[RMDB]
RNA sequence: GGGAACGACUCGAGUAGAGUCGAAAAGAUAUGGAUCCACUGCCAGCAUCGAUCUAACGGGAUCGGAAACGAUCUUUAGGGAGCUGAUGUGGAUCCUAAGUCAAAGCUUCACGUUCGCGUGAAGCAACUUGUAAAGAGUGUUCGCACUCUUUACAAGAAAAGAAACAACAACAACAAC
Reactivity to DMS in 0.01 (KOAc 150mM, MgCl2 10mM, bicine 150mM(pH8.5), 24C), signal-to-noise 8, nucleotides 027 to 126: g010a020u000a030u010g000g000a010u000c000c010a020c010u000g030c300c020a010g020c010a300u000c230g000a010u020c000u000a020a050c300g010g000g000a010u000c000g010g000a000a010a020c010g010a000u000c000u000u000u000a010g010g000g000a010g050c000u000g010a180u000g010u000g000g000a010u000c000c000u000a000a060g000u000c010a090a150a160g010c000u000u000c000a000c010g020u000u010c240g010c010g030u000g000a010a000g010c010a030a020
Reactivity to 2A3 in 0.01 (KOAc 150mM, MgCl2 10mM, bicine 150mM(pH8.5), 24C), signal-to-noise 6, nucleotides 027 to 126: g010a010u020a010u050g000g010a000u000c010c010a000c020u100g300c300c050a010g000c000a050u300c080g000a000u000c000u010a020a030c110g100g010g000a000u000c000g010g000a000a010a000c000g000a000u000c000u020u030u010a010g000g000g000a020g000c000u030g020a140u170g040u000g000g000a000u000c000c000u000a000a000g000u000c000a040a120a130g000c010u000u000c000a010c020g070u090u120c300g040c000g110u000g000a000a000g010c000a000a010
Chemical mapping of a 177-nucleotide RNA with DMS and 2A3. For DMS the reverse transcriptase was MarathonRT. Source: RMDB library TTRDES, as collected in RNAgym.